[RMDB]
RNA sequence: GGGAACGACUCGAGUAGAGUCGAAAACAGAGCUUGACUUGGAGAUGUUGUUCGUGGUGGCAAAGAAGUCUUGAGCCAAGCGUCAACAUUUUAGACUUCCUCAUUCAUGAUGGUGGUGCUAUCGUCCCUUCUCUUCCGUGGACACGAUUUCACCACAGCCGGUAAUACCAUUCGUGGUAUUACCGGCAAAAGAAACAACAACAACAAC
Reactivity to 2A3 in 0.01 (KOAc 150mM, MgCl2 10mM, bicine 150mM(pH8.5), 24C), signal-to-noise 2, nucleotides 027 to 156: c030a020g050a020g130c050u090u190g040a160c000u030u090g090g000a120g000a030u030g010u050u000g040u070u080c050g000u060g160g000u060g050g010c020a070a060a000g070a030a020g090u060c010u100u120g030a040g000c000c060a130a060g010c020g010u050c060a050a010c030a090u130u150u090u110a030g010a050c040u000u000c000c000u110c030a090u140u090c010a030u160g050a070u130g100g000u000g010g010u000g000c020u010a020u030c010g030u030c050c020c000u090u090c080u100c130u300u110c060c140g080u210g000g000a000c000a000c180g000a010u040u040u000c000a000c000c010a010c000a010
The record gives the reactivity of an RNA of 207 nucleotides to 2A3.
As a SHAPE reagent, 2A3 marks flexible, mostly unpaired nucleotides at the ribose 2'-OH.
The RNA was probed in 150 mM KOAc, 10 mM MgCl2 and 150 mM bicine (pH 8.5) at 24 C.
2A3 adducts were read by reverse transcription with SuperScript II with manganese.